Chemical mapping of a 177-nucleotide RNA with DMS and 2A3.
In probing experiments dimethyl sulfate is read out at A N1 and C N3, which are open when not base-paired.
2A3 adducts were read by reverse transcription with SuperScript II with manganese.
The data come from the RNA Mapping Database (RMDB), library OK2TRN.
The DMS profile rests on 2,117 reads.
RNA sequence: GGGAACGACUCGAGUAGAGUCGAAAAGCCGCGCGCGUCGGUGGCGCCGCCGUUUGCGUGCAUCGACUCGAUGCGCCCAAUCCCGGCCAGCAAGUUCCAACUGACGCCACAGCCAGGGGCGGCAGCGCAGUCCGUAAACGUUCGCGUUUACGGACUGAAAAGAAACAACAACAACAAC
Reactivity to DMS in 0.01 (KOAc 150mM, MgCl2 10mM, bicine 150mM(pH8.5), 24C), signal-to-noise 3, nucleotides 027 to 126: g020c140c030g040c030g000c060g020c110g000u000c010g030g010u050g000g010c050g010c020c080g000c100c090g000u000u020u000g000c300g010u000g020c000a030u000c000g000a110c160u010c030g040a030u010g030c000g000c010c040c030a070a110u020c030c120c020g030g010c030c070a090g030c090a080a120g010u010u000c030c040a160a110c040u010g000a060c030g000c000c050a080c110a130g000c070c070a120g000g000g000g010c010g020g010c030a080g020c130g010
Reactivity to 2A3 in 0.01 (KOAc 150mM, MgCl2 10mM, bicine 150mM(pH8.5), 24C), signal-to-noise 1, nucleotides 027 to 126: g000c030c000g000c020g010c020g000c000g010u010c000g010g010u030g020g030c030g030c000c010g120c040c020g060u040u140u090g010c000g000u010g170c000a010u020c030g220a240c050u040c150g020a050u040g020c010g000c030c000c000a000a010u010c020c010c000g010g000c020c030a050g030c010a150a040g050u200u000c020c010a100a060c070u050g000a040c030g000c020c000a090c060a030g000c040c030a050g050g000g030g000c010g010g030c000a000g000c050g000